Structure probing data (DMS) for a 177-nucleotide construct.
[RMDB]
RNA sequence: GGGAACGACUCGAGUAGAGUCGAAAAAAGCGUGUCAAGAUGGGUUAGGUAUCAUUUCCAGCACCUGCGCCGCUGGAGAGAGUACGCCGAGAAGGUUGCGAGGGCUGCGGCGGAGCUCGUGCCCGGCAAGGGAUAUAGGCUUCGGCCUAUAUCCCUUAAAAGAAACAACAACAACAAC
Reactivity to DMS in 0.01 (KOAc 150mM, MgCl2 10mM, bicine 150mM(pH8.5), 24C), signal-to-noise 2, nucleotides 027 to 126: a110a010g010c080g010u000g000u010c080a120a050g000a080u000g000g030g010u000u000a090g000g010u010a010u010c090a190u000u000u010c030c000a040g010c030a090c070c040u000g000c070g020c130c150g000c020u000g020g000a060g000a050g000a170g020u000a050c060g020c020c020g000a140g050a120a120g000g010u000u000g020c030g000a120g020g010g010c050u010g030c040g010g000c020g000g000a060g000c070u020c030g000u000g000c000c010c020g010g020c190

About this RNA: Conditions: 150 mM KOAc, 10 mM MgCl2 and 150 mM bicine (pH 8.5), 24 C.